[RMDB]
RNA sequence: GGGAACGACUCGAGUAGAGUCGAAAAGAUAUGGAUGUGUCCUGGUGGAGGGAUACUGUCGGAAACGACAGAUCCCGAUGAAACCAGGAGCACAUCCUAAGUCAAAGCAGGCAGUUCGCUGCCUGCACCUCAGCGAAAUGUUCGCAUUUCGCUGAGGAAAAGAAACAACAACAACAAC
Reactivity to DMS in 0.01 (KOAc 150mM, MgCl2 10mM, bicine 150mM(pH8.5), 24C), signal-to-noise 1, nucleotides 027 to 126: g000a060u000a300u010g000g000a010u000g040u000g010u000c000c000u000g030g020u000g000g000a080g000g000g010a010u000a070c000u010g040u020c000g020g000a100a080a220c030g010a040c000a000g000a070u000c000c000c000g000a060u010g000a120a210a040c010c000a000g000g000a070g010c000a010c000a010u000c000c010u000a060a070g000u000c030a070a140a090g030c000a000g000g000c010a020g050u000u010c270g000c000u000g000c000c000u000g020c000a020
Reactivity to 2A3 in 0.01 (KOAc 150mM, MgCl2 10mM, bicine 150mM(pH8.5), 24C), signal-to-noise 2, nucleotides 027 to 126: g040a030u070a040u210g000g010a000u000g010u000g040u020c000c000u000g000g030u020g000g070a050g000g070g040a010u210a300c000u000g000u000c010g030g040a030a110a070c010g010a000c010a010g010a010u000c000c000c000g050a150u000g000a020a010a000c000c010a010g000g000a000g020c000a000c000a000u020c000c010u000a100a010g040u020c090a150a040a000g000c010a000g030g000c000a000g000u060u270c230g120c220u000g000c000c000u010g000c000a010
This 177-nucleotide RNA was probed chemically with DMS and 2A3. It was measured as part of the RMDB library TTRDES. Values cover nucleotides 27 to 126.